An RNA of 177 nucleotides, treated with 2A3 and DMS and read out base by base.

RNA sequence: GGGAACGACUCGAGUAGAGUCGAAAAGACCUUCAGUUCGCUGAAGGUCGAUGAUGGUAAGAGAGAUUUCCAUCUGUUAAGUGAUAUGGAUAAGAUCUCUCAGUGAACGUGCUUUCGAGCACGUUAAGCCUUUUAGCUGAUUCGUCAGCUAAAAGGCAAAAGAAACAACAACAACAAC
Reactivity to 2A3 in 0.01 (KOAc 150mM, MgCl2 10mM, bicine 150mM(pH8.5), 24C), signal-to-noise 3, nucleotides 027 to 126: g000a000c000c000u000u000c000a020g000u020u110c120g010c100u010g020a010a010g010g000u000c020g000a000u040g010a000u030g000g240u230a240a020g000a000g000a000g000a000u040u030u000c050c020a010u000c070u050g120u100u160a170a170g100u050g190a110u070a020u200g000g030a020u020a110a070g040a050u000c000u000c010u000c010a000g040u030g130a020a000c010g000u000g000c000u080u070u090c210g050a000g000c010a000c000g010u000u010a010a010
Reactivity to DMS in 0.01 (KOAc 150mM, MgCl2 10mM, bicine 150mM(pH8.5), 24C), signal-to-noise 3, nucleotides 027 to 126: g000a000c000c000u000u000c000a010g010u000u020c180g040c000u010g000a020a000g000g010u000c000g010a030u000g020a110u010g000g020u000a130a130g000a000g000a010g000a040u000u000u000c070c070a020u000c030u000g010u020u010a080a170g010u020g010a130u010a050u000g010g000a060u010a090a100g000a050u000c000u000c000u000c000a120g000u010g000a040a010c010g010u000g010c000u000u000u000c230g010a000g020c000a000c000g010u000u000a040a120
For DMS the reverse transcriptase was MarathonRT. The DMS profile rests on 3,669 reads. It was measured as part of the RMDB library M2PK50.